[RMDB]
RNA sequence: GGGAACGACUCGAGUAGAGUCGAAAAGAUAUGGAGAUCUUAGUACUCCUAGGCUUUUGACGCGAGAAGGGUCGGAAACGACCCGGAUCGCGAUAAGCCUAGGAGUACUACUGGAUCUCCUAAGUCAGAACUAUUUGUUCUUCGGAACAAAUAGUUCAAAAGAAACAACAACAACAAC
Reactivity to DMS in 0.01 (KOAc 150mM, MgCl2 10mM, bicine 150mM(pH8.5), 24C), signal-to-noise 2, nucleotides 027 to 126: g010a020u000a300u000g000g000a000g000a010u000c020u000u010a020g040u000a000c000u010c000c000u010a000g010g000c000u000u000u000u010g000a190c040g020c020g010a000g010a300a300g010g010g010u000c000g020g010a070a120a260c000g030a020c020c000c000g000g000a300u000c020g000c020g000a010u000a000a010g020c010c010u000a010g010g010a000g030u000a010c000u000a020c300u010g000g000a000u000c000u000c000c000u000a010a070g000u010c070a120

Record summary:
Chemical mapping of a 177-nucleotide RNA with DMS. The reactions ran in a buffer of 150 mM KOAc, 10 mM MgCl2 and 150 mM bicine (pH 8.5), at 24 C.